[RMDB]
RNA sequence: GGGAACGACUCGAGUAGAGUCGAAAACCUUCGAGGACGGGUUCGCGACGGGUUGGCUCAUCCUGAGAUCGGGGAGCCUCGACGAUCUCUUUGAUCUCCUGAAGGAGGAAGGAGCUCUCGAGCGCUCAUACUAAGCGGUUCGCCGCUUAGAAAAGAAACAACAACAACAAC
Reactivity to DMS in 0.01 (KOAc 150mM, MgCl2 10mM, bicine 150mM(pH8.5), 24C), signal-to-noise 7, nucleotides 027 to 129: c010c020u010u030c060g020a010g020g000a040c040g000g000g000u000u030c040g030c070g040a100c090g000g020g010u000u000g000g000c070u010c030a060u000c020c050u010g000a050g010a080u040c050g000g000g010g000a030g000c020c020u000c010g000a010c170g000a030u010c000u010c040u000u000u000g000a140u020c010u020c010c040u070g060a140a100g040g020a020g020g000a050a020g000g000a020g000c080u010c010u000c030g020a020g020c150g040c030u020c040a080u000a050
Reactivity to 2A3 in 0.01 (KOAc 150mM, MgCl2 10mM, bicine 150mM(pH8.5), 24C), signal-to-noise 9, nucleotides 027 to 129: c000c000u030u050c060g050a050g030g040a020c050g030g010g010u040u110c040g020c000g060a050c050g030g050g000u040u070g020g000c000u020c020a060u050c010c030u080g030a060g020a090u150c050g010g010g010g010a000g000c010c000u010c010g020a030c100g010a030u010c010u000c000u030u040u080g140a160u020c010u040c000c010u200g130a220a110g010g000a010g000g000a000a010g010g010a010g000c010u000c010u000c010g010a010g000c100g000c010u020c000a030u060a070